[RMDB]
RNA sequence: GGGAACGACUCGAGUAGAGUCGAAAAGUGGCUGCAUCCCUGCAUCAGAGCUACCAGCGAGUCUGUGGGUCGAGUCUCCUACCCAGAGUGUCGGGUGCUGCAGGUAGCAUGGCUUAGGACAUGGGACCUGUCACAAUUUGUUCGCAAAUUGUGACAGAAAAGAAACAACAACAACAAC
Reactivity to DMS in 0.01 (KOAc 150mM, MgCl2 10mM, bicine 150mM(pH8.5), 24C), signal-to-noise 7, nucleotides 027 to 126: g010u020g000g030c010u000g000c060a080u010c040c040c040u020g020c030a060u010c080a080g010a120g020c030u010a050c040c060a120g010c030g020a080g000u010c010u000g010u020g000g010g000u020c050g000a130g010u010c010u000c040c020u010a090c010c000c000a080g010a090g020u020g010u020c050g020g000g020u010g010c070u020g000c050a050g010g000u010a050g020c030a040u000g000g000c030u010u020a110g010g010a050c050a050u000g010g000g000a110c110
Reactivity to 2A3 in 0.01 (KOAc 150mM, MgCl2 10mM, bicine 150mM(pH8.5), 24C), signal-to-noise 9, nucleotides 027 to 126: g050u040g040g030c020u040g010c020a090u080c010c010c010u010g010c030a080u080c050a040g060a030g100c020u060a050c020c010a020g050c010g070a020g090u020c010u040g120u090g020g020g020u030c020g020a030g060u000c040u020c060c010u030a050c010c010c010a030g020a020g090u120g070u090c040g020g020g030u040g040c010u030g010c020a030g030g020u040a020g020c030a040u060g040g000c010u040u070a080g040g020a030c020a060u070g020g020g030a020c000

Record summary: Conditions: 150 mM KOAc, 10 mM MgCl2 and 150 mM bicine (pH 8.5), 24 C. Chemical mapping of a 177-nucleotide RNA with DMS and 2A3. 2A3 is a SHAPE reagent: it acylates the 2'-hydroxyl of flexible nucleotides of all four kinds. In probing experiments dimethyl sulfate is read out at A N1 and C N3, which are open when not base-paired.